RNA sequence: GGGAACGACUCGAGUAGAGUCGAAAACUCGCGAGCCCAUCGAGGCGUGGGGAGCGACAUGAAUCAGCCUCGAUUAGAUGUGGUCGACGGUACCGCGGCGUACAGCGACCUAGUUAGAAGCCGCAAAACCGGAAGAGAUGACGCUCGACGGACGUCAAUCCGAUUACCAGUUCGCUGGUAAUCGGAUAAAAGAAACAACAACAACAAC
Reactivity to 2A3 in 0.01 (KOAc 150mM, MgCl2 10mM, bicine 150mM(pH8.5), 24C), signal-to-noise 1, nucleotides 027 to 156: c020u010c000g050c000g050a260g100c090c000c000a000u010c040g000a010g010g000c040g050u000g000g020g000g000a000g000c060g120a110c030a080u290g010a060a040u060c030a030g000c000c000u030c000g030a090u180u220a160g060a150u200g070u050g050g010u060c030g000a070c020g000g000u030a050c030c000g000c100g000g000c020g020u100a240c010a020g000c030g010a010c020c150u000a000g000u000u000a000g070a080a020g020c000c000g000c000a000a020a100a070c150c050g000g000a080a070g050a030g010a100u140g000a000c030g010c100u000c070g020a040c000g050g030a060c070g050u070c000a020